[RMDB]
RNA sequence: GGGAACGACUCGAGUAGAGUCGAAAAGUGCCUGUAAUCCCAGCUACUCGGGAGGCUGAGGCAGGUGAAUCGCUUGAACCCAGGAGGCGGAGUUUGCAGUGAGCCGAGAUCUCACCACUGCACUCCAAGUCUCUUAGAUUUUCGAAUCUAAGAGACUAAAAGAAACAACAACAACAAC
Reactivity to 2A3 in 0.01 (KOAc 150mM, MgCl2 10mM, bicine 150mM(pH8.5), 24C), signal-to-noise 3, nucleotides 027 to 126: g030u000g010c000c000u000g040u100a070a160u130c040c000c000a000g010c010u040a040c010u020c040g020g050g070a140g060g000c020u020g040a100g030g010c020a010g010g000u080g110a160a150u160c050g010c010u030u050g060a080a080c020c010c010a030g110g080a060g040g100c110g040g000a010g010u110u270u190g010c000a000g010u010g000a020g080c020c040g050a040g020a110u090c110u040c130a060c030c010a000c000u000g000c000a020c010u000c000c000a000
Reactivity to DMS in 0.01 (KOAc 150mM, MgCl2 10mM, bicine 150mM(pH8.5), 24C), signal-to-noise 5, nucleotides 027 to 126: g030u000g010c010c000u000g010u010a170a130u010c010c010c010a050g020c010u000a060c020u010c050g010g010g010a120g010g010c030u000g010a040g000g000c030a020g000g010u000g020a090a100u000c110g010c040u000u000g010a090a110c010c000c030a130g010g010a090g020g000c140g010g010a030g010u000u010u000g010c010a010g010u000g010a170g000c040c020g000a050g020a150u000c130u010c100a150c090c020a030c010u000g010c010a040c030u000c000c010a120